[RMDB]
RNA sequence: GGGAACGACUCGAGUAGAGUCGAAAACUCACGACGUUCGCGUCGUGAGAAAUAAAUACAGCGGUAAUUCGAGCGCAAAUAUUACCGCUGAUGCGCUCGAAAAAAGGGUAUCCUUCGGGAUACCCAAGACUGGUUAUGUGUUCGCACAUAACCAGUCAAAAGAAACAACAACAACAAC
Reactivity to 2A3 in 0.01 (KOAc 150mM, MgCl2 10mM, bicine 150mM(pH8.5), 24C), signal-to-noise 2, nucleotides 027 to 126: c000u000c000a010c010g020a010c010g010u030u120c210g000c000g110u000c000g010u020g040a000g000a000a000a000u090a010a050a020u220a020c030a010g030c000g040g080u090a090a100u070u030c030g020a000g020c020g010c030a000a100a030u230a060u160u140a130c000c020g020c010u000g020a000u010g010c000g000c000u000c010g000a030a000a010a010a030a000g000g020g010u000a010u000c010c000u010u060c190g060g030g000a000u000a000c000c000c000a000a000
Reactivity to DMS in 0.01 (KOAc 150mM, MgCl2 10mM, bicine 150mM(pH8.5), 24C), signal-to-noise 1, nucleotides 027 to 126: c000u000c000a000c030g010a010c000g050u000u030c170g030c010g060u000c020g000u020g000a000g030a040a110a010u000a170a040a140u000a130c090a050g000c000g000g000u020a070a100u000u000c060g030a070g000c010g000c010a020a090a110u000a070u020u000a100c000c060g030c060u010g010a050u000g000c030g000c020u000c000g010a010a020a040a080a090a150g020g000g020u000a010u000c000c030u000u000c280g060g000g000a000u000a010c000c000c000a010a010
This 177-nucleotide RNA was probed chemically with 2A3 and DMS. For 2A3, 2,210 sequencing reads were counted. For DMS, 796 sequencing reads were counted.